[RMDB]
RNA sequence: GGGAACGACUCGAGUAGAGUCGAAAAUGCGCUUUUAUUCAUUUUGCCCGCUAACAAUCAGGGCGAUAGGCUCAUUGAUUGGGGUGUUGCUAAAAAACUCCCUUGGGAUGUGCUGCUUUUAUUUGGCACAUCUCGUCUUAUUCGUAAGACGAGAUGUAAAAGAAACAACAACAACAAC
Reactivity to DMS in 0.01 (KOAc 150mM, MgCl2 10mM, bicine 150mM(pH8.5), 24C), signal-to-noise 8, nucleotides 027 to 126: u000g000c240g010c150u000u000u000u010a090u020u000c060a090u000u000u000u000g010c010c020c010g020c150u010a100a130c120a030a030u000c080a080g000g010g010c010g000a090u010a080g020g010c010u000c010a070u010u000g000a130u000u000g010g010g010g010u000g000u000u000g010c120u020a000a060a080a080a050a050c060u000c010c000c020u000u010g000g000g010a030u000g010u000g000c020u000g000c120u000u000u000u000a120u010u020u000g010g010c100
Reactivity to 2A3 in 0.01 (KOAc 150mM, MgCl2 10mM, bicine 150mM(pH8.5), 24C), signal-to-noise 5, nucleotides 027 to 126: u040g000c040g040c040u120u120u120u120a100u120u120c050a070u020u080u070u150g030c000c000c020g000c080u080a090a070c040a060a060u100c060a030g020g010g010c010g040a080u080a160g150g010c000u000c010a040u000u100g070a150u040u050g020g010g010g020u050g030u040u070g050c120u210a100a080a050a040a010a030c010u020c000c000c000u010u030g040g030g020a020u040g010u000g020c020u020g010c010u010u090u070u070a210u060u100u090g040g010c020
Structure probing data (DMS and 2A3) for a 177-nucleotide construct. It was measured as part of the RMDB library OK2TST. The RNA was probed in 150 mM KOAc, 10 mM MgCl2 and 150 mM bicine (pH 8.5) at 24 C. 2A3 adducts were read by reverse transcription with SuperScript II with manganese.